[RMDB]
RNA sequence: GGGAACGACUCGAGUAGAGUCGAAAAACGCCCGCGGAGAUGAACGCGUCGCCCUCACCGGCCUUGAUCGCGUGGAAGGCCAUCCGGGUGGUCUGCAGCGACGACGAACAGUACCGGUUGACCGUGGGGACUAUCCACGAUUCGUCGUGGAUAGUCCAAAAGAAACAACAACAACAAC
Reactivity to 2A3 in 0.01 (KOAc 150mM, MgCl2 10mM, bicine 150mM(pH8.5), 24C), signal-to-noise 1, nucleotides 027 to 126: a000c040g110c000c000c000g000c000g080g040a200g000a190u170g070a170a100c040g000c050g060u050c020g060c020c000c040u040c020a000c000c000g080g050c010c040u200u280g050a160u060c000g010c040g090u060g030g060a070a030g040g030c000c000a000u080c090c060g260g030g010u000g000g050u000c020u080g090c050a060g040c000g050a100c000g000a020c010g010a140a020c000a010g000u060a130c000c020g020g000u000u120g010a020c000c030g010u080g010g080
Reactivity to DMS in 0.01 (KOAc 150mM, MgCl2 10mM, bicine 150mM(pH8.5), 24C), signal-to-noise 1, nucleotides 027 to 126: a140c060g020c070c020c020g030c000g000g020a300g000a130u000g020a080a180c050g010c010g010u020c050g000c010c050c070u000c050a110c080c040g000g000c210c140u040u000g000a100u000c090g000c080g030u000g040g000a300a070g010g010c000c020a030u000c040c060g000g000g000u000g000g000u000c020u000g000c210a210g000c000g000a010c060g000a050c030g000a070a140c040a030g010u000a130c000c040g000g010u000u000g000a100c050c050g000u000g020g010

Overview: An RNA of 177 nucleotides, treated with 2A3 and DMS and read out base by base. The RNA was probed in 150 mM KOAc, 10 mM MgCl2 and 150 mM bicine (pH 8.5) at 24 C. 2A3 adducts were read by reverse transcription with SuperScript II with manganese.